[RMDB]
RNA sequence: GGGAACGACUCGAGUAGAGUCGAAAAUUCAUGUCAUAUAUCUCCUGCCUCUCACGGUUUCAUCUGUGAGAAGCUUCAAAGAACUGCAAUAGAAGUCUAGCUCGAGAUGCGUGUGCCGGUUUGCUUUCUACUGCAUUGCAUUCGUGCAAUGCAGUAGAAAAGAAACAACAACAACAAC
Reactivity to 2A3 in 0.01 (KOAc 150mM, MgCl2 10mM, bicine 150mM(pH8.5), 24C), signal-to-noise 3, nucleotides 027 to 126: u040u090c060a030u070g000u060c020a020u140a040u010a020u130c030u000c020c020u010g010c010c020u040c000u020c040a020c020g000g120u000u240u170c120a220u100c000u000g040u000g000a000g000a000a010g000c000u050u100c060a190a160a010g070a100a080c050u090g050c090a040a180u020a230g080a120a000g120u040c000u040a020g030c000u000c000g020a020g000a020u070g060c010g040u040g020u130g060c070c010g000g060u020u050u020g100c020u000u000u000